[RMDB]
RNA sequence: GGGAACGACUCGAGUAGAGUCGAAAAGAUAUGGAUCCCUGACGCAGCAUCGAUCUUUCUCGGAAACGAGAAAGGGAGCUGGUCACAUGGGAUCCUAAGUCAAAAGCGCAGAGUUCGCUCUGCGCAACACCAGGAAUAGCUUCGGCUAUUCCUGGUGAAAAGAAACAACAACAACAAC
Reactivity to 2A3 in 0.01 (KOAc 150mM, MgCl2 10mM, bicine 150mM(pH8.5), 24C), signal-to-noise 1, nucleotides 027 to 126: g010a000u060a070u140g010g020a000u010c000c050c000u020g020a010c090g140c300a030g000c000a130u300c040g070a030u030c000u000u020u000c000u000c000g000g060a100a110a080c010g000a000g000a000a000a000g020g000g000a040g040c000u060g080g000u020c010a040c080a170u160g010g000g000a000u000c000c000u010a120a000g060u020c040a000a090a200a060g010c000g010c010a010g000a010g030u070u150c220g060c140u000c000u000g000c010g000c000a000a000
Reactivity to DMS in 0.01 (KOAc 150mM, MgCl2 10mM, bicine 150mM(pH8.5), 24C), signal-to-noise 2, nucleotides 027 to 126: g000a070u010a300u020g020g020a010u010c000c000c020u000g010a020c050g030c110a010g020c000a300u000c220g030a050u010c000u000u000u000c000u020c000g040g000a100a040a260c030g000a020g010a000a000a020g020g000g000a010g010c000u000g010g030u010c000a080c300a120u010g020g030g000a000u000c000c000u000a010a040g010u000c030a090a120a090a160g010c010g010c010a000g020a030g030u000u020c250g020c000u000c000u000g010c000g000c000a020a070